[RMDB]
RNA sequence: GGGAACGACUCGAGUAGAGUCGAAAAACGCUGGGCUCAUGAGAUAGCUGAGCCUUGGACCAACCGAACUACCAUCUGAAGCGCGCACGGAUGGCGGUUGCUAGGCUCCGAAACAUGAGCCUGUGCUGAAGCGCGCACGGCAACCGAAAGGUGCGGACAUUCUGACAAAGUUCGCUUUGUCAGAAUGAAAAGAAACAACAACAACAAC
Reactivity to DMS in 0.01 (KOAc 150mM, MgCl2 10mM, bicine 150mM(pH8.5), 24C), signal-to-noise 2, nucleotides 027 to 156: a020c030g020c000u000g020g000g040c000u000c000a030u000g010a130g000a170u000a130g020c100u020g000a020g010c030c000u000u000g000g000a090c300c030a060a090c030c000g000a070a170c030u000a160c010c000a030u000c000u010g010a040a000g060c000g000c010g000c020a300c000g020g000a050u000g010g000c000g030g000u000u000g000c040u010a040g020g000c020u000c000c040g010a160a170a170c040a070u000g000a030g040c030c010u000g000u000g030c020u010g020a060a020g020c010g030c020g000c010a300c030g000g000c010a060a070c010c010g030a100a080a090g030g010u010g020c000g030g000a180
Reactivity to 2A3 in 0.01 (KOAc 150mM, MgCl2 10mM, bicine 150mM(pH8.5), 24C), signal-to-noise 5, nucleotides 027 to 156: a000c020g000c000u010g010g000g000c000u000c000a010u030g030a060g090a260u230a130g110c300u140g030a010g010c000c000u000u270g010g010a010c020c000a000a010c010c000g010a030a020c050u130a080c300c000a000u000c000u020g060a220a040g010c010g000c000g000c000a020c020g010g000a000u000g010g010c000g000g010u000u000g010c010u000a010g000g000c000u010c040c050g100a170a170a070c000a010u010g000a000g010c010c000u000g010u010g000c010u020g020a100a060g000c010g000c000g000c010a000c000g000g010c000a020a030c000c010g030a070a050a020g010g000u010g000c000g000g010a010
Record summary: Chemical mapping of a 207-nucleotide RNA with DMS and 2A3. Source: RMDB library RNAMAK, as collected in RNAgym. For 2A3 the reverse transcriptase was SuperScript II with manganese. For 2A3, 8,659 sequencing reads were counted. The RNA was probed in 150 mM KOAc, 10 mM MgCl2 and 150 mM bicine (pH 8.5) at 24 C.